[RMDB]
RNA sequence: GGGAACGACUCGAGUAGAGUCGAAAAUGCCUGACAAUUGCAGAGGAGGUGUGAGCGUGUGUCUGGUGGACAAAAGGAUGGAAAGAGCCGACGAGGCCACUCUCGGAUCUUACUACACAGCAGCUGCUGGAUUUGUACCUUUCGAGGUACAAAUCCAAAAAGAAACAACAACAACAAC
Reactivity to 2A3 in 0.01 (KOAc 150mM, MgCl2 10mM, bicine 150mM(pH8.5), 24C), signal-to-noise 4, nucleotides 027 to 126: u130g030c010c030u050g020a040c080a100a190u220u160g020c070a020g030a070g100g060a030g050g000u050g030u020g100a030g010c030g000u050g020u000g030u060c020u050g080g010u060g030g000a000c010a000a180a030a070g100g000a060u170g010g060a110a070a050g040a030g000c030c020g050a080c090g020a020g000g050c080c000a140c020u000c010u010c000g020g010a020u000c000u000u070a090c000u030a050c060a010c000a090g040c010a000g030c020u090g000c020
Reactivity to DMS in 0.01 (KOAc 150mM, MgCl2 10mM, bicine 150mM(pH8.5), 24C), signal-to-noise 3, nucleotides 027 to 126: u010g000c020c020u000g010a130c200a090a100u010u010g000c020a100g000a150g000g010a150g010g030u000g000u010g000a060g000c050g020u010g020u010g000u040c020u010g040g040u040g000g040a070c080a070a050a060a100g000g000a090u000g000g000a030a020a030g000a100g030c000c000g010a030c190g030a060g020g020c160c200a090c010u000c010u000c000g000g000a030u000c000u020u000a060c040u000a120c090a050c080a040g000c050a040g020c060u000g010c060
Source: RMDB library OK1LIB, as collected in RNAgym.
An RNA of 177 nucleotides, treated with 2A3 and DMS and read out base by base.
For 2A3 the reverse transcriptase was SuperScript II with manganese.
The DMS profile rests on 3,450 reads.